[RMDB]
RNA sequence: GGGAACGACUCGAGUAGAGUCGAAAAUUAAUAGAUUUCGAUCUAUUAAACAGGCGGAGGCUCGCUCCUAGCGACCGGCGCAUGCGCGCACGGUACAGCGAAUACUGAAUCCCUUCGGGGAUUCAAAACAGUUAAAGGUGUUCGCACCUUUAACUGUAAAAGAAACAACAACAACAAC
Reactivity to 2A3 in 0.01 (KOAc 150mM, MgCl2 10mM, bicine 150mM(pH8.5), 24C), signal-to-noise 1, nucleotides 027 to 126: u040u010a000a010u000a000g000a000u170u000u060c130g010a010u040c010u000a020u000u020a040a040a010c040a020g070g010c050g110g030a030g130g000c100u050c100g050c000u000c000c010u010a030g010c010g060a010c000c000g030g000c050g000c020a100u300g180c160g020c000g000c180a170c080g010g010u100a140c050a030g000c010g030a040a010u030a200c070u030g000a000a020u000c000c000c000u040u010c150g030g000g000g000a010u000u010c000a020a020a010
Reactivity to DMS in 0.01 (KOAc 150mM, MgCl2 10mM, bicine 150mM(pH8.5), 24C), signal-to-noise 2, nucleotides 027 to 126: u000u000a000a020u000a020g000a030u010u000u010c150g010a050u010c000u000a000u000u010a000a020a060c130a080g010g010c050g010g020a140g000g000c100u000c040g000c000u000c030c020u000a110g020c010g000a030c000c010g000g000c000g030c000a120u010g010c290g020c000g040c010a080c000g010g020u000a030c100a120g000c030g000a080a120u010a120c200u000g000a010a000u000c000c000c000u000u020c200g040g000g010g000a000u000u000c000a020a050a110
An RNA of 177 nucleotides, treated with 2A3 and DMS and read out base by base. For DMS the reverse transcriptase was MarathonRT. The reactions ran in a buffer of 150 mM KOAc, 10 mM MgCl2 and 150 mM bicine (pH 8.5), at 24 C.